The data come from the RNA Mapping Database (RMDB), library OK3TST. Structure probing data (2A3) for a 207-nucleotide construct. The RNA was probed in 150 mM KOAc, 10 mM MgCl2 and 150 mM bicine (pH 8.5) at 24 C. Values cover nucleotides 27 to 156. The 2A3 profile rests on 514 reads.

[RMDB]
RNA sequence: GGGAACGACUCGAGUAGAGUCGAAAAAUACGUAGAAAUGAAGGGACUUGUUACUUGAGGUAAAAAAAGCAAAUAGUACUGCAUCAUGUUUUUUCUCACAAUGUAAUUGUUUUACAUGAAUGGACAUCAGAAAAAAAGCACUUCACUUCAUGUGGACCUAACCGCCAAGUUUCGACUUGGCGGUUAGAAAAGAAACAACAACAACAAC
Reactivity to 2A3 in 0.01 (KOAc 150mM, MgCl2 10mM, bicine 150mM(pH8.5), 24C), signal-to-noise 1, nucleotides 027 to 156: a000u100a010c000g030u030a000g150a080a140a120u070g010a080a110g020g000g030a020c040u060u060g060u110u050a040c040u040u020g020a020g060g020u040a060a000a000a000a000a030a000g030c040a090a000a060u090a060g020u000a040c060u040g010c000a000u020c000a000u030g010u000u000u000u050u070u010c100u040c040a130c040a100a100u100g010u040a070a020u050u100g040u030u140u000u030a010c010a010u000g040a000a110u090g010g030a020c010a050u060c110a120g170a030a160a000a000a000a000a000g050c050a040c020u030u050c030a090c090u020u040c030a010u060g020u000g050g040a030c030